RNA sequence: GGGAACGACUCGAGUAGAGUCGAAAACUGACGGUAGGCGCUGGCCCAUACAUCCUUCAGUGAUUCGAUAUCUUCGCACGCAUCAAGUUCUUUUUUCCAGUCCUUGACGGAUUUCACUGCAAGCUGCGCAUCGUCGUCACUCUGACUAAUACCAAGCCACGUCCGGUCUAUUCGUAGACCGGACGUGAAAAGAAACAACAACAACAAC
Reactivity to 2A3 in 0.01 (KOAc 150mM, MgCl2 10mM, bicine 150mM(pH8.5), 24C), signal-to-noise 1, nucleotides 027 to 156: c010u020g010a000c020g000g000u020a040g160g000c050g000c180u180g050g000c000c060c000a050u170a130c060a110u120c040c010u050u050c020a000g000u060g070a120u000u050c020g030a020u100a120u230c250u160u060c040g000c100a140c020g020c000a100u040c020a010a040g030u020u020c000u000u150u100u010u100u000c040c030a010g000u050c010c070u010u030g020a040c050g010g010a010u000u070u110c040a040c000u010g010c080a050a000g050c020u020g000c000g020c010a040u060c030g020u000c010g000u000c000a000c040u170c110u020g060a140c050u040a010a080u070a160c010c090a000a010g000c020
Chemical mapping of a 207-nucleotide RNA with 2A3. For 2A3 the reverse transcriptase was SuperScript II with manganese. Reactivities are given for positions 27 through 156. The RNA was probed in 150 mM KOAc, 10 mM MgCl2 and 150 mM bicine (pH 8.5) at 24 C. Source: RMDB library OK3TST, as collected in RNAgym. For 2A3, 545 sequencing reads were counted.